[RMDB]
RNA sequence: GGGAACGACUCGAGUAGAGUCGAAAAGAGCCCACAGUUGAAACCACUACACCUAAACUAUGCGAAGCUAGCUCCACGCAACAUUGUACUGCUAUGGGUUACGACUAUUGUAAAAAUAUCUCUGGCGUUCAGAGUUGUUAUUGCUCUCAUCAACAGAUCUACUAUGAUUCUUCGGAAUCAUAGUAGAAAAAGAAACAACAACAACAAC
Reactivity to DMS in 0.01 (KOAc 150mM, MgCl2 10mM, bicine 150mM(pH8.5), 24C), signal-to-noise 1, nucleotides 027 to 156: g040a270g040c020c000c000a130c070a150g010u020u000g010a040a130a100c010c030a070c050u040a100c060a080c040c040u010a030a070a100c040u010a080u010g010c000g010a100a170g040c060u010a030g020c010u000c000c020a080c080g030c030a030a070c070a090u000u000g030u020a070c060u000g000c000u000a170u010g020g010g020u000u000a060c040g020a100c030u000a120u010u000g020u000a000a080a080a080a190u000a130u010c030u010c010u010g030g020c040g000u020u000c050a070g000a110g020u000u000g000u010u010a040u000u010g010c000u000c080u010c070a080u010c040a050a160c160a120g000a150
Reactivity to 2A3 in 0.01 (KOAc 150mM, MgCl2 10mM, bicine 150mM(pH8.5), 24C), signal-to-noise 2, nucleotides 027 to 156: g070a020g080c000c000c000a040c050a010g080u100u080g040a080a100a030c060c000a020c030u090a030c030a060c020c000u100a090a090a000c050u100a080u170g040c060g030a060a010g030c010u030a010g000c010u060c020c010a050c050g000c030a040a120c010a070u080u270g050u080a040c040u030g030c000u040a060u060g050g000g020u020u050a020c010g030a000c000u040a090u120u190g070u110a080a080a080a060a010u140a130u020c030u000c000u060g070g010c050g050u000u020c040a050g000a030g090u000u010g030u150u070a120u130u050g000c010u030c030u020c030a170u050c060a060a030c040a060g070a120